The record gives the reactivity of an RNA of 207 nucleotides to 2A3.
[RMDB]
RNA sequence: GGGAACGACUCGAGUAGAGUCGAAAAACAACAGAUAGCUGGAACCAGCGUAGAAUUCUACGCAUAUCCAUAGCGAAUGGUACCUGUAAAGAAAAUAAUGAUCAAUGUACAAGUACCAACAGUGAUCAAUGCCAUGGUGAUGUCAAUCACAUAUGCACCACUGGAUGGACUUCGGUCCAUCCAGUGGAAAAGAAACAACAACAACAAC
Reactivity to 2A3 in 0.01 (KOAc 150mM, MgCl2 10mM, bicine 150mM(pH8.5), 24C), signal-to-noise 1, nucleotides 027 to 156: a000c010a000a000c000a000g120a110u140a040g000c000u000g000g010a060a020c080c060a000g000c000g000u000a000g150a000a300u300u300c000u000a000c010g000c000a000u140a000u000c000c000a100u140a070g030c110g100a040a230u080g000g000u000a000c000c000u000g000u000a000a180a000g180a120a150a040a000u300a050a200u070g120a150u190c030a120a000u040g000u020a010c000a000a000g000u000a000c000c000a010a010c000a100g200u050g080a000u070c100a010a000u110g030c000c160a000u050g000g090u000g000a000u030g240u290c160a160a090u070c040a010c000a000u240a000u040g000c030a000